The data come from the RNA Mapping Database (RMDB), library TTRINS. This 177-nucleotide RNA was probed chemically with 2A3 and DMS. Reactivities are given for positions 27 through 126. The reactions ran in a buffer of 150 mM KOAc, 10 mM MgCl2 and 150 mM bicine (pH 8.5), at 24 C.

[RMDB]
RNA sequence: GGGAACGACUCGAGUAGAGUCGAAAAGAUAUGGACUUCGAAGAACUAUCCUACGACGAUCCUAUCUUGACUCUUCGGAAACGAAGAGUCAAGAUAGGGGAGUAGAAUAGGGAGAAGUCCUAAGUCACUAAGUGCUAUACUUCGGUAUAGCACUUAGAAAAGAAACAACAACAACAAC
Reactivity to 2A3 in 0.01 (KOAc 150mM, MgCl2 10mM, bicine 150mM(pH8.5), 24C), signal-to-noise 2, nucleotides 027 to 126: g020a010u080a060u250g010g000a010c020u050u030c090g300a300a150g050a150a060c000u010a000u030c000c000u010a050c020g300a120c030g010a100u000c000c000u000a010u000c000u000u000g000a000c010u000c060u000u010c010g040g070a160a080a080c020g030a000a010g000a000g010u020c000a000a010g000a010u000a010g030g000g000g020a000g000u000a000g020a020a000u010a010g030g010g010a070g000a010a000g000u010c000c010u010a010a000g050u000c010a030
Reactivity to DMS in 0.01 (KOAc 150mM, MgCl2 10mM, bicine 150mM(pH8.5), 24C), signal-to-noise 3, nucleotides 027 to 126: g000a090u010a300u010g010g010a000c000u010u000c020g010a200a170g000a160a270c000u000a000u010c010c010u010a010c000g000a090c280g000a040u010c000c010u010a000u000c010u010u000g010a010c000u000c000u000u000c000g010g000a150a130a280c000g030a010a020g000a010g000u000c000a000a000g000a000u000a000g000g030g000g000a040g030u000a000g010a010a000u000a000g020g010g020a130g000a020a010g010u000c000c010u000a010a080g020u000c090a270
The DMS profile rests on 2,388 reads. Values are in units of 0.01, from 0 to 300, in steps of 10. The 2A3 profile rests on 3,248 reads.